[RMDB]
RNA sequence: GGGAACGACUCGAGUAGAGUCGAAAAGAUAUGGAAUGUAGACACUAGUAUGUGAAGAGCUUGGACCAUACGAUCGGAAACGAUCGUUAUGCUAGCUCCACAUACUAGUGUCUACAUUCCUAAGUCAGAUCUACUUUUCGUUCGCGAAAAGUAGAUCAAAAGAAACAACAACAACAAC
Reactivity to DMS in 0.01 (KOAc 150mM, MgCl2 10mM, bicine 150mM(pH8.5), 24C), signal-to-noise 1, nucleotides 027 to 126: g000a090u000a300u010g000g000a010a000u010g020u020a000g000a040c020a000c000u000a020g020u000a000u000g000u010g020a170a160g070a050g010c020u000u010g030g010a140c300c070a020u000a010c000g010a000u000c000g060g000a130a080a230c000g000a000u000c020g060u010u000a030u000g010c000u000a010g010c000u000c010c010a000c000a000u000a000c010u000a020g010u010g010u000c000u000a020c000a000u000u000c000c000u020a000a030g000u010c040a210